Source: RMDB library OK2TST, as collected in RNAgym. This 177-nucleotide RNA was probed chemically with DMS and 2A3. For 2A3, 3,481 sequencing reads were counted. The RNA was probed in 150 mM KOAc, 10 mM MgCl2 and 150 mM bicine (pH 8.5) at 24 C. For 2A3 the reverse transcriptase was SuperScript II with manganese. Values are in units of 0.01, from 0 to 300, in steps of 10.

[RMDB]
RNA sequence: GGGAACGACUCGAGUAGAGUCGAAAACUGCUAGUACCGAGAAGGAAAGUGAAAAUACCGUUAAAGAGCCUAUCUAUCUCGAUAUUGUACUAAGCGAUAUUGCAGAAGACGGGAAGUUUUCAUUCCAUCAUACCACGUAGUUCGCUACGUGGUAUGAAAAAGAAACAACAACAACAAC
Reactivity to DMS in 0.01 (KOAc 150mM, MgCl2 10mM, bicine 150mM(pH8.5), 24C), signal-to-noise 4, nucleotides 027 to 126: c070u010g020c110u000a030g010u000a120c050c040g000a120g010a120a250g010g000a040a070a090g010u010g000a040a020a030a020u000a130c060c040g010u010u010a080a090a100g000a090g010c110c100u000a080u010c040u000a180u010c010u000c010g000a010u000a030u000u000g010u010a130c150u000a080a100g010c010g000a010u000a010u000u000g010c130a030g010a100a120g020a020c020g000g010g000a090a080g010u000u000u000u000c020a080u000u000c010c020a160
Reactivity to 2A3 in 0.01 (KOAc 150mM, MgCl2 10mM, bicine 150mM(pH8.5), 24C), signal-to-noise 3, nucleotides 027 to 126: c010u030g010c030u040a010g050u050a060c030c020g040a030g080a210a040g040g010a080a100a050g080u050g050a040a000a000a050u060a070c000c000g000u020u070a160a110a070g060a020g080c010c070u050a070u040c000u020a150u030c000u000c000g000a010u010a030u070u070g010u020a100c070u070a120a020g000c010g020a010u010a020u040u070g000c070a010g000a170a010g050a040c030g020g020g020a040a080g030u040u000u030u000c020a030u030u030c000c000a050